Overview
Structure probing data (DMS) for a 177-nucleotide construct. The RNA was probed in 150 mM KOAc, 10 mM MgCl2 and 150 mM bicine (pH 8.5) at 24 C. The data come from the RNA Mapping Database (RMDB), library OK2TRN.
[RMDB]
RNA sequence: GGGAACGACUCGAGUAGAGUCGAAAAGUCGCUGCCCCAGGAGACACAGGGUGGGGGGCACAGGAUUGGGCCAGGCCGGGAGCCGCUCAACCUGGGCAGGCUCUGAGCCAGCACAGACGUGAGCUGGGGCUGAAAGUCGAUUCGUCGACUUUCAGCCAAAAGAAACAACAACAACAAC
Reactivity to DMS in 0.01 (KOAc 150mM, MgCl2 10mM, bicine 150mM(pH8.5), 24C), signal-to-noise 1, nucleotides 027 to 126: g000u000c020g020c090u000g020c040c010c010c020a120g000g000a120g020a080c070a100c090a140g000g020g010u010g010g000g010g020g010g000c050a050c080a130g000g010a180u000u000g030g040g010c050c030a140g020g030c020c040g000g000g010a050g030c020c030g030c010u000c030a020a070c140c110u020g000g000g030c000a130g020g010c000u000c040u000g000a060g010c000c000a080g020c000a080c070a000g050a080c110g010u020g000a120g000c010u010g010g010